[RMDB]
RNA sequence: GGGAACGACUCGAGUAGAGUCGAAAAGGUUAGUUCUAGUGUAGCGUCAACACGGUUACAUACGUCAACAAGGCGUUGUGAUACAUUUACCGCAGCAACGGUUGCGCUAUUGCUAUCAAGUUCAGCCGCGGCAAGUGCAGCAAGUGAUGCCUCACCGACAUUCGUGAGUGUUCGCACUCACGAAUGUAAAAGAAACAACAACAACAAC
Reactivity to 2A3 in 0.01 (KOAc 150mM, MgCl2 10mM, bicine 150mM(pH8.5), 24C), signal-to-noise 1, nucleotides 027 to 156: g030g010u010u040a010g010u060u040c030u070a080g010u040g000u100a000g040c020g100u170c040a000a070c010a020c140g000g000u000u000a030c020a030u160a070c020g050u040c050a080a130c110a300a300g010g000c000g000u020u060g000u000g010a040u230a140c050a110u150u170u100a020c010c020g020c040a040g000c040a170a040c040g030g000u000u020g000c050g030c020u040a050u020u100g000c000u040a070u180c080a050a150g010u030u030c010a030g040c020c010g030c030g010g030c010a080a050g030u050g070c010a020g030c010a020a170g070u020g050a030u150g000c000c000u070c050a050c020c000g100

An RNA of 207 nucleotides, treated with 2A3 and read out base by base. The RNA was probed in 150 mM KOAc, 10 mM MgCl2 and 150 mM bicine (pH 8.5) at 24 C. Values are in units of 0.01, from 0 to 300, in steps of 10. Source: RMDB library OK3TST, as collected in RNAgym.